RNA sequence: GGGAACGACUCGAGUAGAGUCGAAAACACAAAGCUGCAGCGCGGCGCUCUGGAGGCCUUGCCCCGCGCACUGCUCUUUACAUGGCCCGACGUGAGGGCACUUCGCGGGCAGUGCUGCGGCCUCGUGAAACUGCCCCUAAGUUCGCUUAGGGGCAAACGGAAGAACAGUGUUCGCACUGUUCUUCCGAAAAGAAACAACAACAACAAC
Reactivity to 2A3 in 0.01 (KOAc 150mM, MgCl2 10mM, bicine 150mM(pH8.5), 24C), signal-to-noise 1, nucleotides 027 to 156: c020a000c000a000a070a000g010c000u010g000c000a020g030c010g010c060g130g000c020g100c080u110c070u190g130g000a020g030g060c050c020u040u130g010c020c010c020c020g000c010g020c000a020c040u010g000c000u000c000u040u170u210a030c020a060u110g070g030c000c080c140g090a110c120g050u070g050a110g000g000g050c010a010c000u070u080c000g010c050g010g000g000c000a000g010u000g030c000u000g000c010g020g020c040c000u000c000g000u010g020a120a100a050c060u020g010c000c000c000c000u000a000a000g000u020u100c120g150c100u000u000a000g040g000g000g000c000a000a000a000